[RMDB]
RNA sequence: GGGAACGACUCGAGUAGAGUCGAAAACCUAUACAGAGGAUAGGCUGGUUCGCUUAAAGAGAAUCUUUUCUAUGAUCAGGUCCGAAUCAUGUUGUACAUGAGCAGGCUCCGUAAGAUCCAGUAUAAGUGAACUAGAUAAAACGGAAUCAAGAUUCCGCGUAUAAUCAACGUUCGCGUUGAUUAUACGAAAAGAAACAACAACAACAAC
Reactivity to 2A3 in 0.01 (KOAc 150mM, MgCl2 10mM, bicine 150mM(pH8.5), 24C), signal-to-noise 4, nucleotides 027 to 156: c000c000u020a040u060a040c100a020g210a070g160g120a070u090a060g110g000c000u000g000g000u010u010c000g000c010u030u020a030a090a010g140a030g030a120a070u060c000u030u150u040u000c090u080a160u190g020a050u070c060a040g020g020u000c010c000g020a040a000u000c000a000u010g000u090u200g100u190a070c010a000u000g010a000g040c120a020g080g050c110u000c030c010g020u010a050a030g010a010u000c010c040a060g070u120a070u010a150a000g000u010g010a000a000c010u010a010g010a020u080a020a070a010a010c010g000g000a000a020u050c100a140a080g030a200u010u000c010c000g000
Reactivity to DMS in 0.01 (KOAc 150mM, MgCl2 10mM, bicine 150mM(pH8.5), 24C), signal-to-noise 2, nucleotides 027 to 156: c010c020u000a090u010a250c050a180g020a130g030g000a110u000a020g000g020c000u000g010g000u000u000c010g050c000u000u000a040a080a240g000a150g010a020a020u000c010u020u000u020u010c090u000a130u010g020a150u000c030a090g020g010u010c000c020g000a070a150u000c030a030u000g000u000u000g010u010a300c020a020u000g000a020g000c050a090g020g020c000u000c040c030g020u000a070a050g000a000u000c000c010a060g020u010a280u000a030a040g000u000g010a030a050c020u000a070g020a150u000a010a050a120a150c030g020g010a040a040u000c050a130a180g000a280u000u000c020c000g020